Source information:
The record gives the reactivity of an RNA of 177 nucleotides to DMS and 2A3. For DMS, 7,029 sequencing reads were counted. For 2A3, 8,268 sequencing reads were counted. The RNA was probed in 150 mM KOAc, 10 mM MgCl2 and 150 mM bicine (pH 8.5) at 24 C.
[RMDB]
RNA sequence: GGGAACGACUCGAGUAGAGUCGAAAAAGAUAUGGAAGCGAUUUCCAGCUCUUGGAUUUAUAGGCGAGUAUGUUCGGAAACGAACAUACGAGCCUAUUGUCAGAGCGGAGGAUCGCUUCCUAAGUCACAUUGGUAUUGUCUUCGGACAAUACCAAUGAAAAGAAACAACAACAACAAC
Reactivity to DMS in 0.01 (KOAc 150mM, MgCl2 10mM, bicine 150mM(pH8.5), 24C), signal-to-noise 4, nucleotides 027 to 126: a060g000a050u000a300u000g000g000a010a010g020c010g010a020u000u000u000c000c010a190g040c000u000c000u000u000g030g010a030u010u010u000a010u000a010g010g030c010g010a240g020u000a010u000g010u000u000c000g000g010a130a120a230c010g010a010a020c000a010u000a000c000g000a300g000c000c000u000a000u000u000g010u000c020a010g000a010g020c000g010g000a040g000g000a010u000c010g020c000u000u000c000c000u000a000a060g000u000c030a180
Reactivity to 2A3 in 0.01 (KOAc 150mM, MgCl2 10mM, bicine 150mM(pH8.5), 24C), signal-to-noise 3, nucleotides 027 to 126: a010g040a010u100a020u130g000g000a000a000g020c000g000a000u040u030u070c030c050a090g000c000u020c020u070u260g250g010a080u150u300u080a040u030a010g010g000c020g000a020g020u000a010u000g010u010u010c010g000g010a060a140a120c010g000a000a000c000a000u010a000c000g000a000g000c000c000u000a000u000u000g000u010c010a000g000a000g010c020g010g010a090g020g050a020u000c000g000c000u000u000c000c000u000a000a010g010u020c000a010